[RMDB]
RNA sequence: GGGAACGACUCGAGUAGAGUCGAAAAGGAAGACAACUCGCGGUCUUCCAAGUACUCGACGCACGAGUGCAGCGUCAAGAAGGAAGGCGAAUGACACCACGUCAUCCAACGCGAGAAGGUGUCAGAAGGGUUGCUGGUACUUCGGUACUAGCAACCCAAAAGAAACAACAACAACAAC
Reactivity to DMS in 0.01 (KOAc 150mM, MgCl2 10mM, bicine 150mM(pH8.5), 24C), signal-to-noise 2, nucleotides 027 to 126: g000g000a030a010g000a000c010a030a130c030u020c000g000c000g000g000u000c000u000u000c010c010a040a030g080u000a020c010u060c080g000a100c090g050c140a190c090g000a180g040u030g050c000a100g020c200g000u000c020a040a110g000a180a070g050g000a110a110g000g000c020g000a050a060u000g000a000c000a010c020c060a110c120g000u000c030a130u050c070c120a080a020c060g010c020g000a050g000a170a080g000g010u000g000u000c000a190g000a130a100
Reactivity to 2A3 in 0.01 (KOAc 150mM, MgCl2 10mM, bicine 150mM(pH8.5), 24C), signal-to-noise 5, nucleotides 027 to 126: g030g010a000a000g000a010c010a050a050c030u000c010g000c010g010g000u000c000u000u010c000c000a000a010g020u030a050c020u010c050g070a040c080g120c070a090c070g060a040g090u130g010c060a030g070c020g110u110c080a070a080g130a050a030g160g070a060a110g010g000c000g020a030a020u040g010a000c000a000c000c010a010c020g010u020c010a060u080c070c040a070a020c020g000c000g000a010g010a020a030g010g000u000g000u000c000a010g090a090a120
Chemical mapping of a 177-nucleotide RNA with DMS and 2A3. Conditions: 150 mM KOAc, 10 mM MgCl2 and 150 mM bicine (pH 8.5), 24 C. The data come from the RNA Mapping Database (RMDB), library OK1LIB. Reactivities are given for positions 27 through 126. For DMS the reverse transcriptase was MarathonRT.